[RMDB]
RNA sequence: GGGAACGACUCGAGUAGAGUCGAAAACUGCAGGCGGAGUGCCGAUCUCCUGAUUCGGCAAACACUAUAACUGCCGAAAAUAACGACAGUUUCGAUUACGCCUUAGCUGCAUAAUCGCGGAAUCUGCUUUGCACUGCUCCGAGCGGGGCAUGAUUCCCAACUUAGACGUCUUCGGACGUCUAAGUUGAAAAGAAACAACAACAACAAC
Reactivity to 2A3 in 0.01 (KOAc 150mM, MgCl2 10mM, bicine 150mM(pH8.5), 24C), signal-to-noise 1, nucleotides 027 to 156: c040u090g000c070a040g000g080c000g020g000a020g000u090g040c040c000g030a050u030c040u090c050c140u150g000a070u110u060c000g000g030c000a010a130a000c160a040c060u150a070u070a300a010c000u000g000c020c000g020a030a060a000a060u110a110a000c040g010a000c000a000g010u020u000u080c020g010a010u000u020a000c010g000c000c020u110u130a070g020c100u050g010c100a010u020a030a020u020c000g000c000g070g000a030a030u010c010u020g000c000u010u040u030g010c000a010c020u070g010c000u000c010c080g020a020g000c040g000g000g020g020c000a000u120g000a000u000u020c000c000
Reactivity to DMS in 0.01 (KOAc 150mM, MgCl2 10mM, bicine 150mM(pH8.5), 24C), signal-to-noise 1, nucleotides 027 to 156: c040u010g010c100a090g020g080c040g060g000a130g020u000g030c010c020g000a050u000c050u020c040c080u020g000a220u010u000c020g020g000c020a130a050a190c090a130c030u000a250u000a000a020c030u000g010c010c010g000a070a100a090a150u030a100a090c010g010a010c030a030g010u010u000u000c000g000a120u000u010a030c000g020c030c010u000u000a130g030c170u000g030c020a050u000a080a140u000c050g010c050g030g000a050a040u000c030u000g010c010u000u020u000g000c010a120c130u000g000c050u000c020c000g050a050g030c110g000g010g010g010c000a030u000g000a140u000u000c050c000

Structure probing data (2A3 and DMS) for a 207-nucleotide construct. Conditions: 150 mM KOAc, 10 mM MgCl2 and 150 mM bicine (pH 8.5), 24 C. It was measured as part of the RMDB library ARCHII.